[RMDB]
RNA sequence: GGGAACGACUCGAGUAGAGUCGAAAACUCUGACGCUUCGGCGUCAGAGAAACCUCUAAGCAGAUUGGCGAGGACGACGCUGCGGAGCGCGUUUGCCUACAAAAACGCAUAGAUUCGUCUAUGCGAACCGUGUUAAUACUUUCGAGUAUUAACACGGAAAAGAAACAACAACAACAAC
Reactivity to 2A3 in 0.01 (KOAc 150mM, MgCl2 10mM, bicine 150mM(pH8.5), 24C), signal-to-noise 6, nucleotides 027 to 126: c000u000c010u010g000a000c010g020c020u050u040c220g140g000c010g000u000c000a010g000a000g000a010a000a000c010c010u010c060u100a130a080g070c060a040g080a300u170u180g090g010c020g020a070g050g030a040c030g020a050c010g010c020u120g060c070g160g090a050g000c090g000c010g010u000u030u100g090c000c000u070a070c080a020a070a020a040a020c010g000c000a000u000a000g000a000u010u030c130g030u000c110u000a010u000g000c000g020a020a020
Reactivity to DMS in 0.01 (KOAc 150mM, MgCl2 10mM, bicine 150mM(pH8.5), 24C), signal-to-noise 5, nucleotides 027 to 126: c000u010c010u000g000a030c000g020c000u000u010c190g030g020c010g010u000c000a010g000a000g000a020a060a080c040c000u000c120u010a110a150g010c120a130g010a150u010u020g010g010c070g010a090g020g000a150c030g010a050c020g030c010u010g040c150g020g010a040g020c060g010c030g010u000u010u000g000c010c010u000a090c170a050a060a090a080a120c020g000c000a010u000a000g010a040u000u010c210g010u000c010u000a000u000g010c000g010a040a050

The data come from the RNA Mapping Database (RMDB), library M2PK50. This 177-nucleotide RNA was probed chemically with 2A3 and DMS. DMS adducts were read by reverse transcription with MarathonRT. For 2A3 the reverse transcriptase was SuperScript II with manganese. For 2A3, 10,459 sequencing reads were counted. For DMS, 4,932 sequencing reads were counted. As a SHAPE reagent, 2A3 marks flexible, mostly unpaired nucleotides at the ribose 2'-OH.